[RMDB]
RNA sequence: GGGAACGACUCGAGUAGAGUCGAAAAUACCACUUUCGAGUGGUAAAAAAAACCUUUGUGAGUUAGAACAUUAUAGGGAGAAGGAGCCCAUUGGGUGACUUCGAAGAACUAUAAUACCCUAACUCACUCUGGUAAAAAAGGUGCAUUCGUGCACCAACAGGAAAAGCAUAUUCGUAUGCUUUUCCUGAAAAGAAACAACAACAACAAC
Reactivity to 2A3 in 0.01 (KOAc 150mM, MgCl2 10mM, bicine 150mM(pH8.5), 24C), signal-to-noise 1, nucleotides 027 to 156: u050a020c010c000a030c010u050u170u130c190g100a000g000u000g000g050u030a050a000a000a000a000a000a000a000c000c000u000u010u000g030u010g000a010g000u010u000a000g010a110a020c030a020u020u000a010u000a010g010g000g060a010g020a000a000g050g010a000g010c020c080c190a300u120u300g000g010g000u020g050a040c010u020u000c050g020a110a000g010a050a000c000u000a000u000a020a010u020a030c030c010c000u000a000a000c000u000c000a000c000u000c000u010g020g040u030a140a000a000a000a000a000g000g000u000g000c000a010u030u120c270g100u070g000c000a000c000c010a000a010